[RMDB]
RNA sequence: GGGAACGACUCGAGUAGAGUCGAAAAAGUCACCUAUUACGAUAGGUGACAUUUGAACCAGCGAACAAUUCAGUUGCGAGAUUCGAGGUUUCAGUCUGAAUCAUAGAAGCCAUUACGAUGGCUACAACUCACUCCCGACUGUUCGCAGUCGGGAGAACAAGGGUGAAGGGUUCGCCCUUCACCCUUGAAAAGAAACAACAACAACAAC
Reactivity to 2A3 in 0.01 (KOAc 150mM, MgCl2 10mM, bicine 150mM(pH8.5), 24C), signal-to-noise 1, nucleotides 027 to 156: a000g000u000c000a000c010c000u020a000u000u060a020c270g050a020u000a010g030g000u000g000a000c000a000u010u020u120g020a000a010c010c000a010g220c020g000a000a010c000a040a040u080u020c000a000g000u000u010g010c010g010a000g000a010u010u000c000g000a030g030g010u120u190u220c050a020g120u000c000u000g000a000a040u030c050a060u080a120g100a050a050g000c000c000a000u000u080a070c240g140a010u030g020g010c010u010a010c040a080a040c000u080c100a040c000u000c000c010c010g050a020c000u000g060u210u030c230g030c180a000g000u000c000g030g000g000a000g000a000a030
Description
An RNA of 207 nucleotides, treated with 2A3 and read out base by base. As a SHAPE reagent, 2A3 marks flexible, mostly unpaired nucleotides at the ribose 2'-OH.